Chemical mapping of a 207-nucleotide RNA with 2A3. 2A3 adducts were read by reverse transcription with SuperScript II with manganese. For 2A3, 1,599 sequencing reads were counted. The reactions ran in a buffer of 150 mM KOAc, 10 mM MgCl2 and 150 mM bicine (pH 8.5), at 24 C.
RNA sequence: GGGAACGACUCGAGUAGAGUCGAAAAGCGUACUACAAGCGUCACCAGCUCAACAGCUAUACUGACGCUAUCCCAAAUAGGAUAGCGGAUGUAUAGACAUGAGCUGCAAGUCGCUUGUAUCGCAAAACCCAGCUGGUCGUUCGCGACCAGCUGGGAACUCCAAAAUAAAGUUCGCUUUAUUUUGGAGAAAAGAAACAACAACAACAAC
Reactivity to 2A3 in 0.01 (KOAc 150mM, MgCl2 10mM, bicine 150mM(pH8.5), 24C), signal-to-noise 2, nucleotides 027 to 156: g010c010g030u090a150c050u000a000c050a010a010g000c010g010u020c010a080c070c000a030g000c000u030c000a050a240c050a110g150c010u000a010u000a010c020u080g190a020c000g000c000u000a000u020c010c020c000a160a300a130u300a090g000g000a010u010a000g000c030g030g000a040u060g000u000a000u000a000g080a030c020a080u030g000a010g020c000u000g040c050a270a230g000u000c000g000c000u010u000g010u010a020u170c000g000c030a010a010a090a080c000c000c000a000g040c000u000g000g000u010c020g000u090u170c300g020c010g120a000c050c000a000g020c030u010g000g000g000a000a010
Reactivities are rounded to 0.1 and cut off at 0 and 3.